Notes:
Chemical mapping of a 207-nucleotide RNA with 2A3 and DMS.

RNA sequence: GGGAACGACUCGAGUAGAGUCGAAAACGCAUUCUCUUCUUGGUGAUCCACGCGCUGACGAUCAACGACCUAUUCAGGAGCUACGUGGACAUCGUCGAUAGCAUACUAGCAGCAGAGAGCUUCGGAGAGAAGAUAGAACUCAUCCGAGCACACAACCACCGGUUGUGUACUUCGGUACACAACCGGUAAAAGAAACAACAACAACAAC
Reactivity to 2A3 in 0.01 (KOAc 150mM, MgCl2 10mM, bicine 150mM(pH8.5), 24C), signal-to-noise 4, nucleotides 027 to 156: c080g000c040a110u120u010c050u000c000u050u020c040u090u080g010g010u000g060a170u020c040c010a020c050g020c010g010c010u060g050a120c090g030a080u100c050a060a140c110g140a100c010c020u140a170u230u160c070a030g020g080a010g020c010u060a050c070g000u010g010g000a020c010a000u010c040g080u030c030g050a070u100a050g000c020a050u040a110c040u030a040g000c030a010g000c000a010g030a000g000a010g020c020u110u080c020g030g000a000g010a010g020a080a020g030a040u160a100g090a080a020c000u000c000a190u000c020c000g020a000g050c020a010c000a020c020a070a020c020c010
Reactivity to DMS in 0.01 (KOAc 150mM, MgCl2 10mM, bicine 150mM(pH8.5), 24C), signal-to-noise 1, nucleotides 027 to 156: c040g030c040a170u000u010c020u010c030u010u000c060u010u000g050g040u120g030a160u000c010c000a070c030g010c200g030c080u030g010a150c120g020a060u020c030a060a020c070g000a070c000c050u000a280u000u000c040a070g000g000a130g000c000u020a010c020g030u030g000g000a030c050a060u000c010g000u000c020g000a160u010a030g090c020a150u000a050c020u010a020g010c000a080g000c000a090g000a040g010a120g020c000u000u010c030g060g010a230g000a080g030a050a090g000a270u000a050g000a030a190c000u000c000a110u000c020c010g020a080g000c030a050c100a020c050a050a070c080c120